[RMDB]
RNA sequence: GGGAACGACUCGAGUAGAGUCGAAAAUCAUUGAGAUGCUGGGCGCUAUGGUCGUCCUCCUCCGGCUGACCUCCUUCUCAGCUACUGACCGGCGCCGCACAGGCGGCAUCUCAGCUUCGUGUGCAAAAAAAGAAUGGUCGGUUCGCCGACCAUUCAAGUGAUUAGUUUUGUUCGCAAAACUAAUCACAAAAGAAACAACAACAACAAC
Reactivity to DMS in 0.01 (KOAc 150mM, MgCl2 10mM, bicine 150mM(pH8.5), 24C), signal-to-noise 1, nucleotides 027 to 156: u000c090a110u010u010g000a000g000a030u010g010c000u000g040g020g040c000g030c000u000a030u010g090g020u000c000g030u000c060c110u000c040c060u010c040c030g030g000c030u010g010a030c060c100u000c110c110u020u000c080u010c010a010g000c020u010a020c060u020g010a040c040c010g000g000c000g020c000c020g070c040a100c150a130g020g020c050g020g000c000a010u000c000u000c000a040g000c040u010u000c100g030u000g050u000g000c030a030a000a050a120a080a180a220g000a010a000u000g020g020u000c000g010g000u010u010c300g030c030c000g010a000c000c010a000u000u000c000a050a150
Reactivity to 2A3 in 0.01 (KOAc 150mM, MgCl2 10mM, bicine 150mM(pH8.5), 24C), signal-to-noise 1, nucleotides 027 to 156: u150c010a030u080u050g000a000g000a000u000g000c010u050g010g050g000c000g000c040u120a240u300g050g000u020c030g050u050c040c060u020c000c000u070c030c060g010g000c020u010g010a010c020c040u170c030c010u190u000c030u040c050a000g010c030u050a000c060u120g010a020c010c000g000g000c030g000c050c000g000c020a050c010a010g090g000c000g020g010c000a000u000c000u000c000a000g000c020u100u110c070g070u110g030u070g110c040a060a030a080a000a000a010a030g000a000a010u000g000g010u000c000g000g020u030u040c100g030c070c000g000a000c000c000a000u000u010c000a000a000
The record gives the reactivity of an RNA of 207 nucleotides to DMS and 2A3. Reactivities are given for positions 27 through 156. The 2A3 profile rests on 1,082 reads. The reactions ran in a buffer of 150 mM KOAc, 10 mM MgCl2 and 150 mM bicine (pH 8.5), at 24 C.